[RMDB]
RNA sequence: GGGAACGACUCGAGUAGAGUCGAAAAAAUGUCACUGUCUCCAAUCAUGUGAUGGAUGAUGGAGGCUUGGACCCUGGCAAUGGAGCAGUGAAGAUAAACCUGAUCAUCUAUUUGGAGGAAGAGCCCACACCCACAGGAUUUGCUGAUUGAUCAGACAUAAUUAGCGAGUAUUCGUACUCGCUAAUUAAAAAGAAACAACAACAACAAC
Reactivity to DMS in 0.01 (KOAc 150mM, MgCl2 10mM, bicine 150mM(pH8.5), 24C), signal-to-noise 3, nucleotides 027 to 156: a080a020u000g020u000c020a090c050u000g020u000c000u000c010c010a050a170u000c060a070u000g020u020g000a180u000g000g000a060u000g030a140u010g010g000a090g020g000c050u000u000g020g020a100c050c020c020u000g010g010c080a120a130u000g020g010a060g010c020a060g020u000g010a070a160g000a130u010a010a060a120c020c010u000g010a130u010c030a040u000c040u010a130u010u000u010g010g020a100g040g000a100a140g040a080g040c020c010c010a060c040a110c030c010c020a090c070a100g020g000a090u000u000u000g000c070u010g000a170u000u000g010a200u000c050a130g000a090c120a120
Reactivity to 2A3 in 0.01 (KOAc 150mM, MgCl2 10mM, bicine 150mM(pH8.5), 24C), signal-to-noise 3, nucleotides 027 to 156: a000a000u170g000u010c040a030c030u030g070u080c010u000c000c020a070a090u000c030a070u100g060u080g060a180u170g080g030a050u030g010a010u050g050g020a040g030g020c020u020u050g040g030a040c030c000c000u000g060g010c050a020a180u060g020g010a010g020c010a000g010u020g100a090a020g020a070u180a040a070a030c010c020u040g020a050u050c030a020u010c020u090a150u120u120u190g030g010a040g000g020a030a070g020a010g050c010c020c000a020c010a010c000c010c000a020c010a020g100g000a090u110u070u170g050c040u030g000a120u080u070g020a060u060c010a010g000a030c010a020